[RMDB]
RNA sequence: GGGAACGACUCGAGUAGAGUCGAAAAGUUCAUUUUAUGGAUUUUCGUGUUGUACGAUUUUUGUCAGUUGCCUCAACAACUACGUGCCCACAAUACUUCCGAUGCAUUCAGAUAAUUUUUGGAAACAACCUCGAUUGUUCUUCGGAACAAUCGAGGUAAAAGAAACAACAACAACAAC
Reactivity to 2A3 in 0.01 (KOAc 150mM, MgCl2 10mM, bicine 150mM(pH8.5), 24C), signal-to-noise 1, nucleotides 027 to 126: g050u000u010c000a000u040u030u220u300a080u050g010g000a000u000u000u000u000c100g000u030g050u110u120g000u050a040c040g020a030u000u000u000u000u200g150u110c030a040g090u080u040g060c040c040u040c010a050a090c000a000a000c030u040a030c050g000u050g000c000c000c000a100c030a100a140u040a070c010u010u000c020c000g000a050u040g050c160a150u040u130c060a010g060a290u090a000a300u010u080u050u090u090g050g000a060a030a000c040a000
Overview:
Chemical mapping of a 177-nucleotide RNA with 2A3. As a SHAPE reagent, 2A3 marks flexible, mostly unpaired nucleotides at the ribose 2'-OH. It was measured as part of the RMDB library RFM100.